[RMDB]
RNA sequence: GGGAACGACUCGAGUAGAGUCGAAAAAGCACACGGGUUUCAGGCAAUUGAACACUUACCGACUAUUCAUGAAAUCCAAGAGAAGAAUAUCACGCUUGUCAUGGCCCCCGCUAUUAAUCUUAUACUGUAUAAACUUAGGCUUCGGCCUAAGUUUAUAAAAAGAAACAACAACAACAAC
Reactivity to DMS in 0.01 (KOAc 150mM, MgCl2 10mM, bicine 150mM(pH8.5), 24C), signal-to-noise 1, nucleotides 027 to 126: a110g020c070a040c030a100c300g020g000g000u000u000u000c030a020g000g060c090a050a100u010u000g040a100a090c080a050c130u000u010a040c150c030g000a140c110u010a060u010u010c030a080u040g000a070a050a070u000c020c000a120a140g000a020g010a030a120g000a090a010u010a010u000c120a100c180g020c020u010u010g000u020c090a050u000g010g050c070c000c000c000c000g010c130u010a050u000u000a090a080u000c070u010u010a150u000a050c100u000g000
The data come from the RNA Mapping Database (RMDB), library OK2TRN. The record gives the reactivity of an RNA of 177 nucleotides to DMS. The RNA was probed in 150 mM KOAc, 10 mM MgCl2 and 150 mM bicine (pH 8.5) at 24 C. DMS (dimethyl sulfate) methylates the pairing face of unpaired adenines and cytosines. The DMS profile rests on 493 reads.